[RMDB]
RNA sequence: GGGAACGACUCGAGUAGAGUCGAAAAGAUAUGGAUCCGUGAACUACUUUGACAGCUCCCGAGCGAGGUCCUCGGAAACGAGGACUACCCACCGCUUAGGGAGCUGUCAAAGCACGGAUCCUAAGUCGAUCUACCUUUGGUUCGCCAAAGGUAGAUCAAAAGAAACAACAACAACAAC
Reactivity to DMS in 0.01 (KOAc 150mM, MgCl2 10mM, bicine 150mM(pH8.5), 24C), signal-to-noise 1, nucleotides 027 to 126: g000a180u000a300u010g000g010a040u000c000c040g040u000g000a050a080c020u080a300c000u010u000u010g000a040c000a000g010c020u000c000c000c000g000a030g000c000g000a120g000g000u000c000c000u020c000g010g000a070a040a190c000g050a010g000g000a000c000u000a000c020c010c090a300c090c050g010c020u000u000a070g020g050g000a000g000c000u000g020u000c010a000a000a030g030c010a000c010g000g000a030u000c000c020u000a000a030g000u000c090